[RMDB]
RNA sequence: GGGAACGACUCGAGUAGAGUCGAAAAGAUAUGGAAAUGUCGCUAGGAAACGUGAGUGUCGGAAACGACACUCUUCCUUGGACCGAGCAUUUCCUAAGUCAAAGGUCCCUUGUUCGCAAGGGACCAACACCACACGUAUGUUCGCAUACGUGUGGUGAAAAGAAACAACAACAACAAC
Reactivity to DMS in 0.01 (KOAc 150mM, MgCl2 10mM, bicine 150mM(pH8.5), 24C), signal-to-noise 3, nucleotides 027 to 126: g000a040u030a300u010g000g010a010a000a000u000g010u000c020g030c030u010a010g000g030a030a050a200c280g020u000g010a020g020u000g000u000c000g020g010a060a060a190c000g010a010c000a000c010u000c000u000u000c010c020u000u000g000g000a110c300c060g020a090g020c010a020u000u000u010c000c000u000a040a100g020u000c050a080a140a130g010g010u000c010c000c000u000u000g010u000u000c160g000c000a010a010g000g020g010a000c000c000a010a090
Reactivity to 2A3 in 0.01 (KOAc 150mM, MgCl2 10mM, bicine 150mM(pH8.5), 24C), signal-to-noise 1, nucleotides 027 to 126: g020a020u090a040u130g000g000a000a010a020u020g030u050c020g040c070u050a030g030g060a110a250a080c200g240u170g140a010g000u000g000u000c020g010g040a090a060a070c010g000a000c000a000c000u000c010u000u000c000c000u020u100g100g050a070c110c080g030a060g080c000a010u000u020u000c000c010u030a190a010g060u020c060a120a060a120g000g000u010c000c010c000u010u000g090u030u050c250g010c090a010a010g020g000g020a000c010c000a000a000